[RMDB]
RNA sequence: GGGAACGACUCGAGUAGAGUCGAAAAAGCAGGCUUAAUAGAUCUCCUUCUACGACGCAUCACCGAGUUGUGCUUCAUGCAGGAGCAGUCUUUCGCUUAUACAUGCCCUAAAUCUGCACCACUUCGGCAAUUAUCUAUGCUUCGGCAUAGAUAAUUGAAAAGAAACAACAACAACAAC
Reactivity to 2A3 in 0.01 (KOAc 150mM, MgCl2 10mM, bicine 150mM(pH8.5), 24C), signal-to-noise 7, nucleotides 027 to 126: a000g050c050a020g060g030c030u130u170a120a030u100a300g100a150u040c010u000c040c000u030u000c010u050a060c100g050a010c040g040c040a060u140c020a050c040c080g100a060g110u080u040g030u030g020c010u030u030c030a040u070g010c010a010g000g030a020g000c030a020g020u000c000u030u160u130c060g000c040u070u040a050u040a100c060a040u120g040c000c020c000u050a080a100a050u040c050u090g030c040a040c050c010a060c050u090u070c010g050g030
Reactivity to DMS in 0.01 (KOAc 150mM, MgCl2 10mM, bicine 150mM(pH8.5), 24C), signal-to-noise 6, nucleotides 027 to 126: a060g020c060a050g010g000c030u000u000a090a070u000a090g010a110u010c030u000c040c020u000u010c020u000a120c090g010a040c100g000c020a050u010c070a090c060c080g000a080g020u000u000g020u000g000c020u000u010c030a070u000g010c120a040g000g000a020g010c110a070g020u000c040u000u000u010c140g010c030u000u000a080u010a090c140a070u010g000c030c020c020u000a030a090a060u010c060u000g000c060a080c070c070a090c090u000u000c070g000g010

About this RNA
The record gives the reactivity of an RNA of 177 nucleotides to 2A3 and DMS. For 2A3, 12,212 sequencing reads were counted. For DMS the reverse transcriptase was MarathonRT. 2A3 adducts were read by reverse transcription with SuperScript II with manganese.